The record gives the reactivity of an RNA of 177 nucleotides to DMS and 2A3. The reactions ran in a buffer of 150 mM KOAc, 10 mM MgCl2 and 150 mM bicine (pH 8.5), at 24 C. It was measured as part of the RMDB library VIROID. For 2A3 the reverse transcriptase was SuperScript II with manganese.

RNA sequence: GGGAACGACUCGAGUAGAGUCGAAAAUCAGCGGCUCAUCAGUGGGCUAAGCCCAGACUUUUGAGAAGUAGAGAUACCUCUCAGCCCCUCCACCUUGGAGUGCCCUAUUCGGAGCACUGCAGUUCCCCUGCUUAGAAUUGUUCGCAAUUCUAAGCAGAAAAGAAACAACAACAACAAC
Reactivity to DMS in 0.01 (KOAc 150mM, MgCl2 10mM, bicine 150mM(pH8.5), 24C), signal-to-noise 2, nucleotides 027 to 126: u020c100a110g010c080g020g000c000u000c020a040u000c150a070g020u000g020g000g010c030u020a070a150g020c020c010c010a170g000a070c210u000u000u000u000g020a020g000a010a040g020u010a020g000a280g010a200u010a020c010c010u000c000u000c000a050g020c000c010c000c020u000c030c010a100c200c080u000u010g000g000a020g010u000g000c000c010c010u010a160u020u000c200g000g000a080g010c020a000c010u000g010c000a090g020u000u000c000c000c000
Reactivity to 2A3 in 0.01 (KOAc 150mM, MgCl2 10mM, bicine 150mM(pH8.5), 24C), signal-to-noise 2, nucleotides 027 to 126: u090c020a000g130c060g030g010c040u010c010a080u020c020a110g160u080g020g010g010c050u020a080a050g030c010c000c000a110g110a220c070u230u210u050u080g020a000g000a020a000g010u020a000g000a010g000a050u010a010c000c000u010c000u000c020a070g030c000c000c010c010u030c010c000a050c000c000u020u070g000g030a000g010u030g020c020c000c000u150a300u160u230c190g020g000a090g000c010a020c010u050g020c000a000g000u000u010c000c000c010
Source information:
For DMS, 1,704 sequencing reads were counted.